Source information
The record gives the reactivity of an RNA of 207 nucleotides to DMS and 2A3. For 2A3 the reverse transcriptase was SuperScript II with manganese.
[RMDB]
RNA sequence: GGGAACGACUCGAGUAGAGUCGAAAAGUCAUAUUCGUAUGACAAAAACCGUAGGUGCAGCAGACGCAGGAACGAAGAACUGCUCUUCGAAAGAGGAGCAGGGAGUUCCUGACCCGUCGUGCUGCACCUAAACGGAAAAAACUUCGUUCGCGAAGAAUGAUAUUCAUGGUUUCGACCAUGAAUAUCAAAAAGAAACAACAACAACAAC
Reactivity to DMS in 0.01 (KOAc 150mM, MgCl2 10mM, bicine 150mM(pH8.5), 24C), signal-to-noise 1, nucleotides 027 to 156: g010u000c020a030u010a040u000u000c300g050u000a010u000g000a030c010a080a090a080a080a150c000c010g000u010a030g010g010u010g010c000a010g000c000a160g010a030c010g010c010a020g030g020a020a000c010g000a130a190g000a120a220c010u010g000c000u000c000u010u000c000g020a090a190a240g000a040g000g000a020g040c000a000g000g000g040a240g010u000u000c000c010u000g000a050c080c100c050g000u000c000g000u000g020c010u000g030c010a000c000c000u000a000a000a030c000g000g000a000a040a040a060a100a120c070u000u000c030g020u000u000c200g000c030g000a040a020g020a150a180
Reactivity to 2A3 in 0.01 (KOAc 150mM, MgCl2 10mM, bicine 150mM(pH8.5), 24C), signal-to-noise 2, nucleotides 027 to 156: g010u000c010a000u010a020u100u120c220g140u090a000u010g000a000c060a010a220a010a010a000c020c020g010u030a000g000g010u000g000c000a000g020c010a000g000a020c000g000c020a000g010g000a000a010c010g060a190a040g030a020a000c010u000g000c000u030c000u010u000c010g110a090a050a060g000a000g020g000a010g020c000a000g000g000g000a010g000u000u020c000c000u010g000a010c030c000c020g000u000c010g020u010g000c000u000g000c000a000c000c000u000a000a060a000c020g000g100a050a000a000a030a000a080c030u120u090c010g050u030u140c260g050c030g190a020a010g060a050a080
2A3 is a SHAPE reagent: it acylates the 2'-hydroxyl of flexible nucleotides of all four kinds.